[RMDB]
RNA sequence: GGGAACGACUCGAGUAGAGUCGAAAACGUUCUCCACACUCCUUCCCCCCCCGGGCUCCUCCAAUAAAAAGGAAAGACCCACCCACUGGGGUCCGACGUCCCACCCUUUCUUACCUUUUGGCCGGCAAACCAUACGACUUCGGUCGUAUGAAAAGAAACAACAACAACAAC
Reactivity to DMS in 0.01 (KOAc 150mM, MgCl2 10mM, bicine 150mM(pH8.5), 24C), signal-to-noise 6, nucleotides 027 to 129: c140g030u000u030c010u000c010c060a110c040a180c030u030c010c050u010u030c070c030c020c000c020c000c040c050g010g010g000c080u030c070c030u050c000c110a060a050u080a050a050a060a070a050g000g000a060a100a120g020a000c020c000c010a100c080c050c010a080c090u020g000g000g000g000u010c000c080g040a140c060g000u020c050c000c020a160c070c010c020u030u020u040c040u000u000a080c100c030u010u030u030u010g030g000c000c000g000g000c000a000a080a070c110
Reactivity to 2A3 in 0.01 (KOAc 150mM, MgCl2 10mM, bicine 150mM(pH8.5), 24C), signal-to-noise 6, nucleotides 027 to 129: c020g030u030u020c030u010c010c000a030c000a020c020u060c000c000u010u040c000c000c000c000c000c010c010c030g000g000g000c000u010c010c000u010c000c010a060a070u170a130a080a020a010a000g060g000a040a040a010g040a040c000c000c000a030c020c040c010a050c080u090g000g010g010g010u030c010c020g030a070c060g030u010c000c010c010a060c020c010c000u000u050u030c030u050u070a080c010c000u020u050u030u050g020g010c020c010g010g010c020a040a000a030c040